[RMDB]
RNA sequence: GGGAACGACUCGAGUAGAGUCGAAAAGUCACUCAAUUCGUUGAGUGACAUACUGGGCCCGGAGUCGCGCAUGUAAGGGUCAAGACGCGCUCGAUAAAAUAACUAGUUGCCAGUUCGCUGGCAACAACGAUUAGCUAUUAUUCGUAAUAGCUAAUCGAAAAGAAACAACAACAACAAC
Reactivity to DMS in 0.01 (KOAc 150mM, MgCl2 10mM, bicine 150mM(pH8.5), 24C), signal-to-noise 9, nucleotides 027 to 126: g010u000c000a010c000u000c000a010a020u000u020c190g020u000u000g000a020g010u000g010a010c000a020u000a020c110u000g020g000g010c010c010c020g010g010a100g010u010c030g030c060g020c080a090u000g020u010a180a110g010g010g010u000c060a110a070g010a120c020g010c050g000c010u000c010g010a100u010a040a070a080a080u010a050a130c120u000a110g010u000u000g000c010c000a010g000u000u010c200g010c010u000g010g000c000a000a000c010a050a140
Reactivity to 2A3 in 0.01 (KOAc 150mM, MgCl2 10mM, bicine 150mM(pH8.5), 24C), signal-to-noise 9, nucleotides 027 to 126: g000u000c000a000c000u000c000a000a040u100u080c170g050u100u010g000a000g000u010g000a000c000a000u030a000c010u060g040g070g010c010c010c000g020g010a030g030u190c040g010c020g010c100a040u120g060u210a090a120g140g020g040u090c040a010a030g050a050c010g010c000g010c010u010c020g090a130u130a150a140a030a040u150a080a020c090u070a070g010u010u000g000c000c000a000g010u030u040c230g020c050u000g000g010c000a000a000c000a000a000
Conditions: 150 mM KOAc, 10 mM MgCl2 and 150 mM bicine (pH 8.5), 24 C. An RNA of 177 nucleotides, treated with DMS and 2A3 and read out base by base. For 2A3, 48,467 sequencing reads were counted. The data come from the RNA Mapping Database (RMDB), library M2PK50. DMS adducts were read by reverse transcription with MarathonRT.